The data come from the RNA Mapping Database (RMDB), library OK1LIB. This 177-nucleotide RNA was probed chemically with 2A3 and DMS. 2A3 is a SHAPE reagent: it acylates the 2'-hydroxyl of flexible nucleotides of all four kinds. DMS adducts were read by reverse transcription with MarathonRT. 2A3 adducts were read by reverse transcription with SuperScript II with manganese. Conditions: 150 mM KOAc, 10 mM MgCl2 and 150 mM bicine (pH 8.5), 24 C.
[RMDB]
RNA sequence: GGGAACGACUCGAGUAGAGUCGAAAAUGACGUGGCACUGGAUGAGAGUGGUGACUUCUCCUUGGUAGAGGAAGAUGGUCCACCCAUGAGAGAGAUCAUACUCAAGGUGGUCCUGAUGGCCAUCUGAUCUAAAUUAAUCGUUCGCGAUUAAUUUAGAAAAAGAAACAACAACAACAAC
Reactivity to 2A3 in 0.01 (KOAc 150mM, MgCl2 10mM, bicine 150mM(pH8.5), 24C), signal-to-noise 9, nucleotides 027 to 126: u120g020a020c050g020u030g010g000c030a020c070u040g040g030a060u080g050a040g010a020g100u090g020g030u040g040a030c010u080u010c010u030c010c010u040u050g110g030u170a090g020a060g130g020a060a060g060a110u130g060g050u020c020c010a040c010c010c010a060u130g010a040g000a000g000a000g010a140u060c020a040u080a090c020u020c050a030a040g050g010u040g010g010u040c010c020u100g080a160u190g030g000c000c010a020u010c030u030g040a040
Reactivity to DMS in 0.01 (KOAc 150mM, MgCl2 10mM, bicine 150mM(pH8.5), 24C), signal-to-noise 9, nucleotides 027 to 126: u030g010a080c100g010u000g010g010c030a060c040u000g000g010a070u020g000a110g000a060g020u010g010g020u010g000a060c030u000u010c020u000c000c020u020u000g020g010u020a090g010a110g000g000a080a090g010a100u010g000g010u000c010c010a080c060c010c030a060u000g000a100g000a080g000a080g000a090u010c090a070u020a070c030u010c020a090a110g010g020u000g000g000u000c010c070u010g010a110u030g000g000c010c030a050u000c020u000g010a190